[RMDB]
RNA sequence: GGGAACGACUCGAGUAGAGUCGAAAAGGGCCUUCACAACAGAAACCUCUGAAACAGGGACAGCAAGUUUGAGAAUAAAAAUGAUGGCUACUGUGUUCUAAGCCGUGUCCUUAGUGCAUUUUUUCUUUUUCUUUUUUUCAUUUAAUCUCAUAACAACCAUAUCUGAUUGGUUCGCCAAUCAGAUAUGAAAAGAAACAACAACAACAAC
Reactivity to DMS in 0.01 (KOAc 150mM, MgCl2 10mM, bicine 150mM(pH8.5), 24C), signal-to-noise 1, nucleotides 027 to 156: g000g050g020c030c030u000u010c050a130c030a100a150c050a180g000a090a090a080c010c020u010c020u000g020a060a050a150c000a080g000g010g000a090c050a080g020c050a030a100g000u000u010u000g000a150g000a100a160u000a030a050a060a050a110u000g010a050u010g010g020c000u000a060c120u000g000u000g010u000u000c080u000a060a090g030c000c040g000u000g030u000c040c020u000u000a050g000u000g000c030a020u000u000u000u000u000u000c000u010u000u000u000u000c000u030u000u000u000u020u000u040c010a060u000u010u000a110a120u000c000u000c040a060u020a070a060c090a050a150c110
Reactivity to 2A3 in 0.01 (KOAc 150mM, MgCl2 10mM, bicine 150mM(pH8.5), 24C), signal-to-noise 4, nucleotides 027 to 156: g030g000g010c020c000u060u050c090a100c060a140a070c050a060g120a100a090a050c020c040u030c030u130g060a060a080a040c050a040g020g000g050a030c030a010g050c020a080a090g020u040u100u100g060a050g020a090a050u180a180a070a030a010a010u070g010a010u040g060g020c010u060a070c060u110g000u000g020u070u000c020u030a020a030g000c060c070g150u080g020u060c010c000u020u010a010g030u010g030c010a020u040u010u010u040u080u090c020u100u090u040u090u050c030u100u140u080u130u020u040u020c020a060u050u040u100a160a130u050c060u050c070a070u180a200a030c050a030a070c020
Chemical mapping of a 207-nucleotide RNA with DMS and 2A3.
2A3 adducts were read by reverse transcription with SuperScript II with manganese.
For DMS the reverse transcriptase was MarathonRT.
The reactions ran in a buffer of 150 mM KOAc, 10 mM MgCl2 and 150 mM bicine (pH 8.5), at 24 C.
For DMS, 2,349 sequencing reads were counted.
Values cover nucleotides 27 to 156.